RNA sequence: GGGAACGACUCGAGUAGAGUCGAAAAAAAAAAAAGAUAUGGAGCGAUCCAGUUGGGAGCUUUAGUACCAUCGGAAACGAUGGGACCGAGCUUUGAUCAACUGGAGUCGCUCCUAAGUCAAAAAAAACAUAUCUUUUACGUUCGCGUAAAAGAUAUGAAAAGAAACAACAACAACAAC
Reactivity to DMS in 0.01 (KOAc 150mM, MgCl2 10mM, bicine 150mM(pH8.5), 24C), signal-to-noise 1, nucleotides 027 to 126: a000a000a010a020a040a140a300a150g000a030u010a300u000g000g000a010g040c010g000a110u020c000c000a010g000u000u000g000g000g000a010g020c000u020u000u010a020g000u000a140c010c000a000u010c020g000g010a170a170a210c010g000a000u010g000g010g000a020c240c220g000a000g000c000u000u000u010g010a110u050c000a010a000c000u020g000g000a010g010u010c020g000c000u000c000c000u000a000a040g000u000c040a030a030a000a120a180a060a070a070